RNA sequence: GGGAACGACUCGAGUAGAGUCGAAAAGAUAUGGAAUGUAUGAGUAGAACCAUGCUCGGAAACGAGCACGCGUUCGCAGAUACAUACCGCUUCCUAAGUCAAACCUGCCUGGUUCGCCAGGCAGGAACGUUGCCCAUACGUUCGCGUAUGGGCAACGAAAAGAAACAACAACAACAAC
Reactivity to DMS in 0.01 (KOAc 150mM, MgCl2 10mM, bicine 150mM(pH8.5), 24C), signal-to-noise 1, nucleotides 027 to 126: g000a040u010a070u010g010g000a070a060u000g010u000a000u000g000a080g000u000a000g010a010a000c030c000a040u000g040c000u000c000g010g030a030a000a060c030g000a030g010c000a000c010g000c210g030u000u000c000g000c110a130g000a000u000a020c000a000u000a000c020c300g010c300u000u000c000c000u000a040a180g000u010c010a070a060a150c020c030u000g000c000c000u010g000g000u000u000c230g000c000c020a020g000g000c000a000g000g010a030a000
This 177-nucleotide RNA was probed chemically with DMS. The RNA was probed in 150 mM KOAc, 10 mM MgCl2 and 150 mM bicine (pH 8.5) at 24 C. Source: RMDB library TTRDEL, as collected in RNAgym. Reactivities are given for positions 27 through 126. The DMS profile rests on 780 reads.